[RMDB]
RNA sequence: GGGAACGACUCGAGUAGAGUCGAAAACGUUGGUAUAGACGGGCAACGUCUCAAGCGGAUCGGUAAUGUUGUCUGGUACUGCGGUAAAUGUUGCCACAUAGCCGCCCAGCAAGAACGCGGCAGCCUGGUAGAUUAAUGCGUUCGCGCAUUAAUCUACAAAAGAAACAACAACAACAAC
Reactivity to 2A3 in 0.01 (KOAc 150mM, MgCl2 10mM, bicine 150mM(pH8.5), 24C), signal-to-noise 2, nucleotides 027 to 126: c010g020u040u070g020g090u170a120u110a190g070a050c070g000g020g040c000a020a020c010g040u040c030u030c110a040a030g000c020g030g000a040u050c030g000g020u120a130a120u060g200u300u090g060u060c010u010g040g000u110a260c060u020g030c040g000g070u140a040a040a110u080g020u040u050g000c000c000a030c030a030u090a000g020c010c000g040c000c010c010a000g030c050a060a020g030a040a030c080g010c000g020g000c010a000g020c000c020u020g080
Reactivity to DMS in 0.01 (KOAc 150mM, MgCl2 10mM, bicine 150mM(pH8.5), 24C), signal-to-noise 2, nucleotides 027 to 126: c080g020u000u020g010g050u000a130u010a090g030a110c090g000g010g040c020a030a040c020g020u010c020u000c250a110a170g030c050g030g040a060u000c040g010g030u000a040a110u000g010u000u000g010u000c000u000g020g030u000a060c070u010g020c010g020g000u020a110a110a030u000g010u000u010g010c020c040a060c130a130u010a090g020c000c000g000c030c040c050a090g000c080a080a110g010a070a100c230g000c020g010g000c040a080g000c050c040u010g000
Structure probing data (2A3 and DMS) for a 177-nucleotide construct. For DMS, 1,775 sequencing reads were counted. For 2A3 the reverse transcriptase was SuperScript II with manganese. Values are in units of 0.01, from 0 to 300, in steps of 10. Conditions: 150 mM KOAc, 10 mM MgCl2 and 150 mM bicine (pH 8.5), 24 C. Values cover nucleotides 27 to 126.